[RMDB]
RNA sequence: GGGAACGACUCGAGUAGAGUCGAAAAUGACCGUAUUCGUCAAUUUGCUUACGCGUGACCUGCGCGCCACCCGGUACGCGCAAUGCUGCGACACGGCCUUUGGCAUCAUUGGCUGGGCCAGAGAAGACACUGCCUAAACCUUCGGGUUUAGGCAGUGAAAAGAAACAACAACAACAAC
Reactivity to 2A3 in 0.01 (KOAc 150mM, MgCl2 10mM, bicine 150mM(pH8.5), 24C), signal-to-noise 1, nucleotides 027 to 126: u110g040a030c000c060g080u050a100u130u120c030g020u000c080a110a150u110u010u180g010c000u080u040a050c050g000c000g060u020g050a080c000c040u040g000c060g030c030g000c030c010a040c060c000c030g010g030u040a070c000g040c020g010c010a030a100u010g010c000u000g020c020g040a020c020a000c050g000g000c000c030u110u140u170g040g000c050a200u120c050a080u200u110g170g040c050u020g000g000g000c030c000a010g040a000g030a090a020g080a000
Reactivity to DMS in 0.01 (KOAc 150mM, MgCl2 10mM, bicine 150mM(pH8.5), 24C), signal-to-noise 1, nucleotides 027 to 126: u020g030a070c000c020g050u000a140u010u010c100g000u000c070a150a100u000u000u010g000c020u000u000a080c120g000c040g010u000g020a130c090c080u020g030c070g020c010g010c000c040a050c010c030c060g000g020u000a050c040g010c090g010c060a050a090u000g020c050u000g050c030g000a080c090a040c010g000g000c020c000u010u000u000g010g010c160a090u010c100a030u000u010g010g020c080u000g010g020g000c010c020a150g000a080g000a110a110g000a300